[RMDB]
Description
This 177-nucleotide RNA was probed chemically with DMS and 2A3. For DMS, 1,083 sequencing reads were counted. For 2A3 the reverse transcriptase was SuperScript II with manganese. The RNA was probed in 150 mM KOAc, 10 mM MgCl2 and 150 mM bicine (pH 8.5) at 24 C.
RNA sequence: GGGAACGACUCGAGUAGAGUCGAAAAGGUUCAUGGUUCGCCAUGAACCAAAAGUACAGCUAUGAGUACAAGUGUCAUAGCAAAAGAACGAAAGAUCAAAAAAAAGUAGCUCCUUCGGGAGCUACAAGUAAUUGGUCUAGUUCGCUAGACCAAUUACAAAAGAAACAACAACAACAAC
Reactivity to DMS in 0.01 (KOAc 150mM, MgCl2 10mM, bicine 150mM(pH8.5), 24C), signal-to-noise 2, nucleotides 027 to 126: g000g010u000u000c000a000u000g010g000u000u000c270g080c010c000a000u000g000a010a020c000c000a010a000a030a250g010u000a010c030a230g000c000u000a020u000g010a020g010u020a000c040a150a190g010u000g010u010c000a020u010a030g000c000a080a060a140a090g010a060a130c070g000a120a080a050g010a050u050c070a020a030a000a020a060a050a250a120g010u000a000g000c000u000c000c010u000u000c230g040g010g000a010g000c000u000a000c000a010a080
Reactivity to 2A3 in 0.01 (KOAc 150mM, MgCl2 10mM, bicine 150mM(pH8.5), 24C), signal-to-noise 2, nucleotides 027 to 126: g000g000u000u000c000a020u010g030g000u040u060c140g050c060c010a010u000g000a000a000c000c000a000a000a000a000g010u010a010c010a000g010c000u010a010u020g000a000g000u040a030c130a300a070g110u120g010u280c010a010u010a010g000c000a000a090a030a070g040a100a000c070g030a070a100a010g050a090u200c110a060a040a020a000a070a000a020a100g000u000a000g000c000u000c020c010u060u070c160g050g000g000a010g000c000u000a000c000a010a010
Notes: Source: RMDB library M2PK50, as collected in RNAgym.